[RMDB]
RNA sequence: GGGAACGACUCGAGUAGAGUCGAAAAGGUCAAGACCACAGCUGCUGAUGUCACAGCUGAGGCACAUCAGAAAGGCUGCCUGAUUCAAAGAAAGCUGCCGGAUAAAUCAUAGAGCACAGACACUUCUACCUCAUGCUCUUAUGGGACUUUAGGAACACAGCGAUGAUUAGUUCGCUAAUCAUCGCUGAAAAGAAACAACAACAACAAC
Reactivity to 2A3 in 0.01 (KOAc 150mM, MgCl2 10mM, bicine 150mM(pH8.5), 24C), signal-to-noise 1, nucleotides 027 to 156: g060g010u140c040a100a000g080a110c000c000a000c050a070g010c000u030g010c000u070g070a110u040g120u100c030a000c000a050g050c050u000g020a180g000g060c010a000c000a090u020c030a030g130a170a070a020g010g010c000u020g030c000c030u060g050a070u070u180c060a050a140a150g040a140a090a040g000c000u010g000c050c000g050g000a030u090a000a240a000u110c080a020u020a030g030a000g030c030a020c030a030g060a050c050a050c150u120u150c050u200a110c030c000u030c030a020u050g000c000u080c050u050u130a050u040g030g010g050a090c030u120u140u050a130g040g010a040a080c020a000